[RMDB]
RNA sequence: GGGAACGACUCGAGUAGAGUCGAAAAUAAUAUGCAUAUCGAGUUCCCAUGUAUUUUCGUUGCCCUGCGGCUGUAACAUUACAGCUUAGUAAGAAUGCUACCUAACGAUAGCUAGCCGCAGGAUUAACAAUUUAAGAUUGUUCGCAAUCUUAAAUUGAAAAGAAACAACAACAACAAC
Reactivity to DMS in 0.01 (KOAc 150mM, MgCl2 10mM, bicine 150mM(pH8.5), 24C), signal-to-noise 9, nucleotides 027 to 126: u010a080a090u010a080u000g010c060a050u000a080u010c080g010a150g010u000u000c000c000c000a130u000g010u000a050u000u000u010u000c060g010u000u000g010c070c000c000u000g000c010g000g010c000u000g010u010a070a110c190a100u000u000a010c030a150g010c220u010u000a090g010u000a020a030g010a100a090u000g010c000u000a010c020c020u010a100a130c220g000a040u000a010g000c010u000a030g010c000c000g000c000a010g000g000a010u010u000a040a170
Reactivity to 2A3 in 0.01 (KOAc 150mM, MgCl2 10mM, bicine 150mM(pH8.5), 24C), signal-to-noise 4, nucleotides 027 to 126: u070a020a030u130a050u160g050c050a040u080a060u260c060g070a040g090u000u020c010c000c000a000u060g040u010a100u020u110u010u090c070g040u040u110g020c020c000c000u000g000c000g000g000c000u020g040u060a060a060c040a110u020u060a020c020a020g090c100u040u030a030g010u010a020a010g010a080a020u090g000c000u030a030c000c030u050a110a050c080g070a090u040a010g000c030u020a000g020c010c000g000c000a000g000g000a000u000u010a000a000
An RNA of 177 nucleotides, treated with DMS and 2A3 and read out base by base. Conditions: 150 mM KOAc, 10 mM MgCl2 and 150 mM bicine (pH 8.5), 24 C. DMS adducts were read by reverse transcription with MarathonRT. The 2A3 profile rests on 5,463 reads. For DMS, 16,345 sequencing reads were counted.